[RMDB]
RNA sequence: GGGAACGACUCGAGUAGAGUCGAAAAACGGUCAUAUACGUAUGACCGAAUGACCAUAACAGGGCCACCCCAAAGCGUUCACAUUGUGGCCCCUGUCAGAUUCUGGUAAAUCUGCGAGUUCUGCUAAAUUAGGUAACUCUCUUCGGAGAGUUACCAAGUUUAGCUAUCGGUUCGCCGAUAGCUAAACAAAAGAAACAACAACAACAAC
Reactivity to 2A3 in 0.01 (KOAc 150mM, MgCl2 10mM, bicine 150mM(pH8.5), 24C), signal-to-noise 2, nucleotides 027 to 156: a000c000g000g020u000c010a000u030a000u010a080c210g110u050a040u000g000a000c010c000g010a000a070u080g010a010c000c030a090u080a130a020c000a040g000g000g000c000c000a010c010c070c020c060a010a130a100g090c100g140u160u140c090a130c020a250u100u110g000u010g000g050c140c030c000c000u000g000u010c010a020g050a110u130u010c010u230g030g040u070a070a070a090u020c020u040g050c060g060a050g070u080u040c050u060g020c050u160a080a120a200u160u120a110g000g000u010a000a020c000u020c000u020c000u050u000c070g030g000a000g000a000g000u000u000a000c000c000a000a000
Notes:
Structure probing data (2A3) for a 207-nucleotide construct. 2A3 adducts were read by reverse transcription with SuperScript II with manganese. Values are in units of 0.01, from 0 to 300, in steps of 10. The RNA was probed in 150 mM KOAc, 10 mM MgCl2 and 150 mM bicine (pH 8.5) at 24 C.